[RMDB]
RNA sequence: GGGAACGACUCGAGUAGAGUCGAAAAUAAGGCGUGGUUGGUGCGACGGUCCGGGACACCCGAGCCUGUCUCUCUGUGUAUGGUGACCCAGACAACAACACCGACACAAGAGGACAAUAAUCCGUUACCGUCUCAGAUAAUUCGUUAUCUGAGACGGAAAAGAAACAACAACAACAAC
Reactivity to 2A3 in 0.01 (KOAc 150mM, MgCl2 10mM, bicine 150mM(pH8.5), 24C), signal-to-noise 5, nucleotides 027 to 126: u260a050a040g080g020c070g070u110g040g130u090u060g030g010u050g010c000g010a050c070g040g020u010c030c030g000g000g030a050c020a060c030c010c020g030a040g030c030c090u080g030u000c080u000c010u000c030u050g050u020g020u120a170u300g010g000u060g010a070c020c010c040a040g050a080c080a070a010c010a000a000c000a060c000c010g010a000c010a010c020a010a060g020a030g040g000a000c020a040a020u150a070a070u060c040c060g010u030u120a070
Reactivity to DMS in 0.01 (KOAc 150mM, MgCl2 10mM, bicine 150mM(pH8.5), 24C), signal-to-noise 2, nucleotides 027 to 126: u070a080a020g000g000c070g020u050g000g090u010u000g000g000u000g000c020g010a220c300g000g010u020c020c080g000g030g070a230c030a070c010c000c110g000a130g000c040c020u030g000u000c050u020c020u020c040u010g000u010g020u030a120u030g010g000u020g000a180c030c040c030a110g030a100c180a130a010c100a180a270c000a000c000c000g000a000c000a000c000a110a110g000a070g000g000a030c000a070a100u110a080a120u070c020c000g000u000u000a130